[RMDB]
RNA sequence: GGGAACGACUCGAGUAGAGUCGAAAACAACUGUUAUCUUGCCACUGCAUUGUUAACACUCCAACAAAUAGAGUUGAAGUUUAAUCCACCUGCUCUACAAAGGGCUGGUGAAGCUGCUAACUUGUGUAACCUGCGCGGUUCGCCGCGCAGAAAAGAAACAACAACAACAAC
Reactivity to 2A3 in 0.01 (KOAc 150mM, MgCl2 10mM, bicine 150mM(pH8.5), 24C), signal-to-noise 2, nucleotides 027 to 129: c030a000a050c110u070g040u100u060a200u120c060u030u050g040c000c000a060c070u100g000c010a050u000u050g000u040u050a020a010c000a040c080u000c010c000a030a030c000a030a240a130u160a110g110a000g000u000u100g030a010a000g010u130u070u300a000a000u140c000c000a010c010c010u060g010c030u040c000u140a110c030a190a080a110g000g040g000c020u000g010g000u000g000a000a000g000c050u010g050c000u000a000a070c000u070u010g000u000g040u000a000a000c000
Reactivity to DMS in 0.01 (KOAc 150mM, MgCl2 10mM, bicine 150mM(pH8.5), 24C), signal-to-noise 3, nucleotides 027 to 129: c070a120a190c000u050g010u020u020a090u020c030u030u040g000c000c180a050c000u020g040c040a100u030u000g000u030u030a070a040c130a110c110u000c000c000a070a090c130a100a070a040u040a190g070a050g050u000u000g050a000a100g030u010u010u010a170a120u030c010c020a140c000c010u000g040c020u020c000u040a100c300a000a070a040g010g000g000c010u060g000g040u060g010a010a080g000c040u010g020c010u000a020a000c000u010u000g000u060g000u030a060a040c060